[RMDB]
RNA sequence: GGGAACGACUCGAGUAGAGUCGAAAAUAGCGCAUUAUAGCCGGCAUAUAUGCUAAUUACGCGGCAUGCGCUAGCAUCGUAAUGCAUAUCGGCAUGCCGAUUAGCAUUAUACGCGCGAUUAGCAUGCCGAUUCGCCACCAUUCGUGGUGGCGAAUCGAAAAGAAACAACAACAACAAC
Reactivity to 2A3 in 0.01 (KOAc 150mM, MgCl2 10mM, bicine 150mM(pH8.5), 24C), signal-to-noise 2, nucleotides 027 to 126: u060a010g030c000g010c030a020u080u100a140u230a170g060c050c010g090g000c060a030u110a030u050a020u150g000c010u020a040a030u060u050a050c060g000c000g050g000c020a010u000g000c000g000c020u000a000g000c000a040u090c060g110u080a130a020u040g000c010a030u050a010u160c010g030g020c090a030u100g010c000c000g000a000u010u040a020g010c000a000u060u080a050u090a060c060g030c000g000c010g000a000u020u000a000g010c030a000u010g020c000
Reactivity to DMS in 0.01 (KOAc 150mM, MgCl2 10mM, bicine 150mM(pH8.5), 24C), signal-to-noise 3, nucleotides 027 to 126: u020a020g010c030g030c020a050u010u010a170u010a130g020c020c000g000g000c100a090u000a070u010a040u010g020c070u000a050a030u010u000a090c200g000c040g000g020c030a070u000g000c020g010c040u010a030g010c080a110u000c290g000u000a030a080u000g010c030a120u000a020u010c030g030g000c020a050u000g000c000c030g000a010u000u010a260g010c010a040u000u010a070u010a220c210g010c010g000c030g000a030u010u000a080g010c000a010u000g030c070